[RMDB]
RNA sequence: GGGAACGACUCGAGUAGAGUCGAAAAAUAAUACUCUGACAUUAUCGCUAAUUGAUACAUCGGUAAGUGAUAUGCCUAUAAAGUAAUAAUCUUCUUUGGGUACAUAUACCAGUGUACCAGGUUCUAACAACCUAUUUACUGGUGCUCCUGUAGCAUACCUCAUACACACAUUCGUGUGUGUAUGAGGAAAAGAAACAACAACAACAAC
Reactivity to DMS in 0.01 (KOAc 150mM, MgCl2 10mM, bicine 150mM(pH8.5), 24C), signal-to-noise 2, nucleotides 027 to 156: a060u000a090a100u000a060c030u000c040u010g000a080c040a030u020u000a010u000c020g000c030u010a190a130u000u010g010a140u000a160c100a140u020c010g030g020u000a080a190g040u020g000a100u000a020u010g000c000c000u000a120u010a070a060a020g010u010a070a090u000a100a120u010c070u000u000c020u010u000u000g000g040g010u000a040c050a100u000a110u000a080c030c050a090g000u010g040u010a020c030c020a000g010g000u000u000c050u010a110a130c070a020a020c010c010u000a140u000u010u000a010c040u000g010g040u000g010c050u010c010c020u010g020u000a030g030c070a080u000a120
Reactivity to 2A3 in 0.01 (KOAc 150mM, MgCl2 10mM, bicine 150mM(pH8.5), 24C), signal-to-noise 6, nucleotides 027 to 156: a000u160a020a020u040a030c020u000c050u120g060a050c030a080u080u090a050u100c020g000c050u040a180a080u110u060g050a060u110a190c100a150u070c040g040g000u050a040a030g010u010g020a030u020a030u130g010c010c010u150a140u080a180a120a000g060u050a040a120u050a150a080u080c060u130u010c010u090u170u090g030g000g010u050a020c020a020u140a020u040a090c030c020a020g010u020g010u020a030c020c010a000g040g010u000u010c120u140a100a100c070a050a030c040c020u020a080u060u120u070a040c020u020g030g000u020g000c010u050c050c040u110g090u170a010g040c040a030u070a090
Structure probing data (DMS and 2A3) for a 207-nucleotide construct. It was measured as part of the RMDB library OK3TST. For DMS, 3,452 sequencing reads were counted.